RNA sequence: GGGAACGACUCGAGUAGAGUCGAAAAAGUGGCACUGUAAAACUCAGGGCGACAAAGAGAGCAGGGUUCGAGGCUUCAGUUCAUGGGGCCUGGAAGGCUGUUUUACGUGUGGGUCAGACUCAACGGCCUUACUUCGGUAAUUCGUUACCGAAGUAAGAAAAGAAACAACAACAACAAC
Reactivity to DMS in 0.01 (KOAc 150mM, MgCl2 10mM, bicine 150mM(pH8.5), 24C), signal-to-noise 9, nucleotides 027 to 126: a090g020u000g000g020c010a050c020u020g000u020a060a060a100a120c170u020c020a040g010g000g010c020g000a040c070a060a080a110g000a080g010a050g010c010a020g000g000g020u000u000c020g010a020g000g000c010u000u000c000a030g020u030u040c270a100u000g010g000g000g010c010c010u000g000g010a030a030g000g010c010u000g000u000u000u000u010a060c100g000u010g030u010g000g000g000u000c050a090g000a300c050u010c060a090a080c120g000g010c080
Reactivity to 2A3 in 0.01 (KOAc 150mM, MgCl2 10mM, bicine 150mM(pH8.5), 24C), signal-to-noise 9, nucleotides 027 to 126: a010g080u070g040g010c020a010c040u050g020u090a040a070a090a040c040u050c040a010g020g010g020c010g030a030c060a030a130a010g140a020g010a010g010c020a010g030g100g110u030u040c040g100a010g010g000c000u010u020c010a070g040u090u080c050a080u160g000g000g000g000c000c000u020g030g020a010a010g130g050c010u010g040u020u030u030u070a050c040g040u080g010u050g060g020g020u040c050a040g040a100c010u020c070a030a020c030g040g000c000